[RMDB]
RNA sequence: GGGAACGACUCGAGUAGAGUCGAAAAGAUAUGGACCCGUCACAGCUAGCUGGUCGGAAACGACUCAGCUUGGACCUGUCCUGGGUCCUAAGUCAAACAUGAAGUACAGUUCGCUGUACUUCAUGAAGGAAUGAUGUUACUUCGGUAACAUCAUUCCAAAAGAAACAACAACAACAAC
Reactivity to DMS in 0.01 (KOAc 150mM, MgCl2 10mM, bicine 150mM(pH8.5), 24C), signal-to-noise 2, nucleotides 027 to 126: g000a020u000a060u000g000g000a030c010c000c000g000u000c050a010c020a020g030c020u000a030g010c000u000g000g010u000c000g010g000a030a030a040c000g010a030c000u010c010a000g020c000u000u020g030g010a130c250c000u000g000u000c030c000u010g020g000g020u000c000c010u000a000a060g000u000c010a140a100a290c030a000u000g000a010a000g010u000a020c010a010g000u000u010c200g020c000u000g000u000a000c000u000u010c000a010u000g010a110a090
Reactivity to 2A3 in 0.01 (KOAc 150mM, MgCl2 10mM, bicine 150mM(pH8.5), 24C), signal-to-noise 2, nucleotides 027 to 126: g020a000u000a010u050g000g010a000c010c020c010g050u050c020a010c000a030g110c020u010a000g000c000u010g000g010u000c000g000g020a030a020a010c000g010a010c030u110c180a000g000c010u000u030g010g070a190c020c000u010g000u010c000c030u060g030g000g020u000c000c000u010a020a000g000u000c010a080a070a090c010a030u010g020a010a000g010u000a000c000a010g010u030u110c280g030c160u020g010u010a010c010u000u000c030a000u010g010a030a040